Overview: The data come from the RNA Mapping Database (RMDB), library OK2TST. Structure probing data (DMS and 2A3) for a 177-nucleotide construct. The DMS profile rests on 10,785 reads. For DMS the reverse transcriptase was MarathonRT. 2A3 adducts were read by reverse transcription with SuperScript II with manganese.

[RMDB]
RNA sequence: GGGAACGACUCGAGUAGAGUCGAAAAAUCUUCACGUAUCUUUACCGAGAGCGCCUCUAAUACAGUAUUCAUCUGCUUCCACGAGCUAAACAGUACCAGCACCGCAGUGGCGUCCUCUAGCUGCGCAAUGAACCUACUUAUUCGUAAGUAGGUUCAUAAAAGAAACAACAACAACAAC
Reactivity to DMS in 0.01 (KOAc 150mM, MgCl2 10mM, bicine 150mM(pH8.5), 24C), signal-to-noise 8, nucleotides 027 to 126: a080u010c040u000u010c070a100c100g010u000a040u010c030u000u000u010a110c080c040g000a080g010a090g020c080g010c060c020u000c040u000a050a070u010a080c090a070g010u000a080u000u000c090a060u000c050u010g010c060u000u000c020c040a080c090g010a080g000c060u000a060a050a070c100a050g000u000a060c030c010a060g000c050a120c170c040g000c040a030g010u000g000g010c070g010u000c020c010u000c050u000a110g020c030u000g020c040g000c200a080
Reactivity to 2A3 in 0.01 (KOAc 150mM, MgCl2 10mM, bicine 150mM(pH8.5), 24C), signal-to-noise 4, nucleotides 027 to 126: a000u040c040u110u120c040a040c050g030u060a080u140c020u040u060u100a090c020c020g010a010g000a030g070c030g030c020c000u030c040u070a090a120u080a120c030a040g050u040a100u070u080c030a080u040c030u030g010c010u070u010c030c010a080c060g020a030g000c010u050a110a060a020c020a030g010u040a060c000c020a010g010c040a010c020c030g020c010a010g010u020g070g020c020g030u020c000c000u000c010u000a010g000c010u030g010c030g010c030a000